[RMDB]
RNA sequence: GGGAACGACUCGAGUAGAGUCGAAAAGAUAUGGAACGUAUGGAGCUGCACCAAGGUAUAGACAGCCUAUUCGGAAACGAAUAGGCCGAACCUUGGUGCAGAACUACUCCUAAGCGUUCCUAAGUCACUCAAUGUAUAUCUUCGGAUAUACAUUGAGAAAAGAAACAACAACAACAAC
Reactivity to DMS in 0.01 (KOAc 150mM, MgCl2 10mM, bicine 150mM(pH8.5), 24C), signal-to-noise 5, nucleotides 027 to 126: g010a020u000a300u010g010g010a030a000c010g020u010a300u010g000g000a010g010c010u000g000c000a010c000c000a000a010g000g020u000a260u000a170g020a200c300a160g010c020c000u000a010u000u000c000g000g010a080a050a160c010g010a010a010u000a000g010g000c000c010g010a050a030c010c010u000u000g000g010u000g000c000a000g000a030a030c170u020a300c000u000c000c010u010a100a170g010c000g000u000u000c000c000u000a010a080g010u000c020a300
Reactivity to 2A3 in 0.01 (KOAc 150mM, MgCl2 10mM, bicine 150mM(pH8.5), 24C), signal-to-noise 2, nucleotides 027 to 126: g020a020u060a020u170g000g000a000a000c010g030u040a120u230g020g000a010g030c020u000g020c010a000c000c000a010a010g060g000u070a300u240a250g110a060c040a020g010c000c000u000a010u000u000c010g020g040a030a050a040c000g000a000a000u000a000g000g000c010c000g020a010a010c010c000u000u000g000g000u000g000c000a000g000a000a000c000u010a000c000u000c000c000u020a300a040g040c000g000u000u000c000c000u000a030a000g000u000c010a010